Annotation
Chemical mapping of a 177-nucleotide RNA with DMS and 2A3. The RNA was probed in 150 mM KOAc, 10 mM MgCl2 and 150 mM bicine (pH 8.5) at 24 C. For 2A3, 10,179 sequencing reads were counted. It was measured as part of the RMDB library M2PK90.

RNA sequence: GGGAACGACUCGAGUAGAGUCGAAAAAAAAAGAGCGUAAUCGCGUCAUUGAGUGACGUGAAGAUCAUCCAAGUGUGCUGUCUACAGUCGUAGAUAGCGCACAAUACGCUGAUGAACAUUCAAAAAACUUUGAAUGUUAGUUCGCUAACAUUCAAAGAAAAGAAACAACAACAACAAC
Reactivity to DMS in 0.01 (KOAc 150mM, MgCl2 10mM, bicine 150mM(pH8.5), 24C), signal-to-noise 6, nucleotides 027 to 126: a020a040a050a060a080g010a050g020c020g030u000a080a080u000c010g010c010g020u000c010a040u010u000g010a150g030u000g010a010c000g020u010g010a020a070g010a090u000c130a070u000c040c060a080a080g020u000g010u000g010c000u000g010u000c000u000a000c000a170g030u010c260g010u000a000g000a010u000a010g000c000g020c000a000c000a050a060u010a020c050g020c020u000g010a070u000g010a060a070c180a100u010u000c060a000a090a070a050a070a080
Reactivity to 2A3 in 0.01 (KOAc 150mM, MgCl2 10mM, bicine 150mM(pH8.5), 24C), signal-to-noise 7, nucleotides 027 to 126: a000a000a000a000a000g100a010g000c010g000u010a060a030u030c000g000c000g010u000c010a020u100u300g210a140g280u040g000a000c010g000u000g020a030a000g050a060u100c050a020u040c040c030a100a100g000u000g000u010g000c000u000g010u000c000u000a040c060a250g150u240c170g000u110a010g000a010u000a000g000c000g000c010a000c000a000a000u010a010c010g000c010u020g010a030u080g020a050a060c060a150u080u170c130a070a080a020a020a070a120